[RMDB]
RNA sequence: GGGAACGACUCGAGUAGAGUCGAAAAGCUUCCGUCGAACGCGAAAGUCGGACGGCGGCCAUGAGUCGCAACGCAAAGCCGCGGCAAGUGGAGUUAGCGAGAAGAGACUAGGCGUUGGUUUCUUCAAAUUAGUGAGUGUGGUUCGCCACACUCACAAGGAGCAUUAACUCUUCGGAGUUAAUGCUCCAAAAGAAACAACAACAACAAC
Reactivity to 2A3 in 0.01 (KOAc 150mM, MgCl2 10mM, bicine 150mM(pH8.5), 24C), signal-to-noise 1, nucleotides 027 to 156: g000c000u070u020c000c000g000u010c000g030a090a030c000g000c000g150a140a130a070g200u300c000g030g030a010c000g000g000c010g020g040c000c000a050u070g020a010g000u000c000g000c020a030a090c060g080c160a270a110a000g020c050c040g000c030g000g020c000a010a040g020u010g000g030a140g050u110u130a020g000c040g000a010g010a080a050g040a000g020a020c050u050a110g000g070c050g020u010u060g050g000u000u000u000c000u000u010c010a000a090a200u110u020a050g000u000g000a000g000u000g000u030g000g050u050u040c170g040c050c000a000c030a000c010u000c000a000c000a000a000
Background:
Structure probing data (2A3) for a 207-nucleotide construct. For 2A3, 752 sequencing reads were counted. Conditions: 150 mM KOAc, 10 mM MgCl2 and 150 mM bicine (pH 8.5), 24 C. For 2A3 the reverse transcriptase was SuperScript II with manganese.